The record gives the reactivity of an RNA of 177 nucleotides to 2A3 and DMS. The DMS profile rests on 1,427 reads. 2A3 adducts were read by reverse transcription with SuperScript II with manganese. The reactions ran in a buffer of 150 mM KOAc, 10 mM MgCl2 and 150 mM bicine (pH 8.5), at 24 C.
RNA sequence: GGGAACGACUCGAGUAGAGUCGAAAACAGGGCUUACUAGUUCACACAGUUGCAUCCACACACCAAUUGUUUUAACAAUUUGGAGUGAGUGUGUUUUGAUCGAUACGGGUCCUCUCACCUAGACUAGUAACGCAAAGCGGUUCGCCGCUUUGCGUUAAAAAGAAACAACAACAACAAC
Reactivity to 2A3 in 0.01 (KOAc 150mM, MgCl2 10mM, bicine 150mM(pH8.5), 24C), signal-to-noise 2, nucleotides 027 to 126: c050a000g000g020g000c000u070u000a030c010u040a080g010u080u060c030a000c000a010c000a150g040u190u090g080c000a020u000c060c000a000c000a010c000a000c040c010a000a000u000u000g060u120u130u080u170a180a070c030a020a030u020u100u200g070g000a090g030u010g040a060g030u060g000u000g010u010u030u160u030g070a100u080c080g010a000u000a110c030g000g000g000u000c000c030u030c030u050c000a080c000c000u010a000g030a060c030u010a000g060
Reactivity to DMS in 0.01 (KOAc 150mM, MgCl2 10mM, bicine 150mM(pH8.5), 24C), signal-to-noise 1, nucleotides 027 to 126: c100a000g000g010g000c100u030u050a050c030u010a050g040u000u010c170a120c070a020c060a120g000u020u040g000c020a070u020c060c010a150c020a030c040a210c000c000a020a040u000u000g000u000u080u060u000a130a030c000a000a000u020u040u050g050g040a180g020u000g020a100g000u000g000u000g000u040u000u020u030g020a050u000c030g010a160u000a040c140g030g000g050u040c030c000u000c010u000c090a160c020c020u000a050g000a020c080u010a050g000